[RMDB]
RNA sequence: GGGAACGACUCGAGUAGAGUCGAAAAGCUGAUAUUCAUGGGGCCACCCCUAACCCAUAUGGUGCCUUUGCAACUUAACAAGAGGUACCCUUUCUCUUGAGCACAUGGCUUGGCUGGUGGAAUACUGGUUUCACGUUCGAUUCGUCGAACGUGAAACAAAAGAAACAACAACAACAAC
Reactivity to DMS in 0.01 (KOAc 150mM, MgCl2 10mM, bicine 150mM(pH8.5), 24C), signal-to-noise 1, nucleotides 027 to 126: g000c050u000g000a100u000a080u000u000c040a000u000g030g000g000g020c060c070a130c120c010c030c030u000a140a080c080c030c030a050u000a100u000g010g000u000g020c000c030u000u000u000g000c080a140a170c200u000u010a040a120c090a070a030g010a030g000g010u000a050c060c060c120u000u000u010c060u000c030u000u000g020a070g000c070a020c050a050u000g000g020c050u000u020g000g010c060u000g010g020u010g020g020a120a090u000a030c060u030g020
Reactivity to 2A3 in 0.01 (KOAc 150mM, MgCl2 10mM, bicine 150mM(pH8.5), 24C), signal-to-noise 1, nucleotides 027 to 126: g000c040u070g020a060u040a060u270u170c140a100u080g000g000g060g050c020c020a080c000c010c000c040u030a040a110c010c000c000a060u010a090u130g060g030u010g000c000c000u050u050u120g040c050a110a140c120u150u150a200a070c060a040a100g010a010g100g000u090a080c000c000c000u090u230u000c040u000c000u000u080g020a020g040c010a010c040a140u090g130g000c000u020u000g000g000c010u010g000g000u040g050g000a040a040u070a090c030u050g040
This 177-nucleotide RNA was probed chemically with DMS and 2A3. The data come from the RNA Mapping Database (RMDB), library OK2TRN. For 2A3, 940 sequencing reads were counted. The RNA was probed in 150 mM KOAc, 10 mM MgCl2 and 150 mM bicine (pH 8.5) at 24 C. DMS adducts were read by reverse transcription with MarathonRT.